Chemical mapping of a 177-nucleotide RNA with 2A3 and DMS. The RNA was probed in 150 mM KOAc, 10 mM MgCl2 and 150 mM bicine (pH 8.5) at 24 C. For DMS the reverse transcriptase was MarathonRT. It was measured as part of the RMDB library RFMREP. For 2A3 the reverse transcriptase was SuperScript II with manganese. For DMS, 1,410 sequencing reads were counted.
[RMDB]
RNA sequence: GGGAACGACUCGAGUAGAGUCGAAAAUCAGGUGGCCGCAUAUAUUGCGAGCCAGAUAGGGCAGAACGCGCAGUCCGUGCAGACCACGGCAGAGUCGCAUUUGCGUUGCUCGAGGCGCAACCGAUACGAUUCACGAUUAGUUCGCUAAUCGUGAAUCAAAAGAAACAACAACAACAAC
Reactivity to 2A3 in 0.01 (KOAc 150mM, MgCl2 10mM, bicine 150mM(pH8.5), 24C), signal-to-noise 2, nucleotides 027 to 126: u070c030a030g260g060u020g060g000c030c000g020c060a000u200a030u030a060u230u180g000c010g030a030g000c000c000a000g000a020u060a010g040g050g000c030a010g010a130a040c040g020c000g000c010a010g030u020c000c020g000u000g000c040a050g020a220c080c010a010c000g000g010c030a020g030a030g160u180c040g000c050a040u030u030u050g040c050g030u040u030g000c010u010c000g010a010g010g000c000g000c020a020a020c000c000g030a030u050a170c130
Reactivity to DMS in 0.01 (KOAc 150mM, MgCl2 10mM, bicine 150mM(pH8.5), 24C), signal-to-noise 2, nucleotides 027 to 126: u000c030a180g000g050u000g000g010c080c000g070c000a020u000a210u000a130u010u000g030c000g010a130g040c000c010a030g000a070u000a070g010g000g030c040a030g000a030a040c130g000c000g000c020a200g010u010c010c030g000u000g010c170a170g010a110c300c000a030c020g000g010c070a150g010a130g020u010c030g000c020a100u000u000u000g000c040g000u000u000g000c020u000c000g020a050g010g000c010g000c060a050a260c000c010g000a120u000a060c200